An RNA of 177 nucleotides, treated with DMS and read out base by base. The reactions ran in a buffer of 150 mM KOAc, 10 mM MgCl2 and 150 mM bicine (pH 8.5), at 24 C. It was measured as part of the RMDB library RFM100.
RNA sequence: GGGAACGACUCGAGUAGAGUCGAAAAUAUCAAAAACACAUGCCCAAUAAAGAAAGUCAAUAGCGACGUUAGGAGAGCCUAGCGGUCUAUUGACUUUCUUUAUAGUGUUUUACGGAUUAGAAGAGUUUACAUUCCAAGGUUUCGACCUUGGAAUGUAAAAAGAAACAACAACAACAAC
Reactivity to DMS in 0.01 (KOAc 150mM, MgCl2 10mM, bicine 150mM(pH8.5), 24C), signal-to-noise 1, nucleotides 027 to 126: u060a000u000c150a100a030a170a000a000c000a000c000a170u030g050c060c000c000a220a030u000a000a030a000g000a000a040a000g000u020c000a000a000u000a000g020c300g060a170c000g010u000u020a000g010g000a270g000a150g020c000c000u000a000g000c000g000g000u000c000u000a000u000u000g020a040c000u000u000u000c000u000u010u050a000u000a030g000u000g000u000u000u000u030a080c270g000g010a030u000u000a110g010a160a130g010a030g040u030u000